About this RNA:
Conditions: 150 mM KOAc, 10 mM MgCl2 and 150 mM bicine (pH 8.5), 24 C. This 177-nucleotide RNA was probed chemically with 2A3 and DMS. Source: RMDB library M2PK50, as collected in RNAgym.
RNA sequence: GGGAACGACUCGAGUAGAGUCGAAAAUAGUCGGAAUUCGUUCCGACUAGAUGAACGCUGCAAGCGGCAGCGCGCUCAAAAGAGCACGCAAAAGCAACGCAAAAAUGAACUUAUUCGUAAGUUCAAACAUACUCAAAGCGUUCGCGCUUUGAGUAUGAAAAGAAACAACAACAACAAC
Reactivity to 2A3 in 0.01 (KOAc 150mM, MgCl2 10mM, bicine 150mM(pH8.5), 24C), signal-to-noise 2, nucleotides 027 to 126: u020a020g020u000c000g000g030a010a020u100u030c170g060u100u000c020c010g000a000c000u000a000g010a030u130g030a090a020c060g020c080u040g020c050a080a180g020c030g030g000c030a010g010c000g000c010g000c000u010c000a230a280a120a110g010a010g010c010a010c020g020c010a040a050a020a060g000c020a060a040c090g000c020a000a090a020a000a090u060g000a010a000c000u020u020a020u080u060c140g060u050a000a000g000u000u010c030a010a020a000
Reactivity to DMS in 0.01 (KOAc 150mM, MgCl2 10mM, bicine 150mM(pH8.5), 24C), signal-to-noise 2, nucleotides 027 to 126: u000a020g000u000c030g030g000a050a000u000u030c190g000u000u000c000c000g010a010c000u000a010g030a150u000g010a140a120c090g060c120u000g010c030a150a300g020c020g000g050c300a190g000c000g050c020g030c010u010c000a090a090a150a170g010a030g000c000a000c000g000c030a030a030a190a170g000c000a040a040c110g020c040a020a030a050a060a100u000g000a030a000c010u000u000a020u010u040c150g000u000a000a000g000u000u000c000a040a030a190
DMS (dimethyl sulfate) methylates the pairing face of unpaired adenines and cytosines.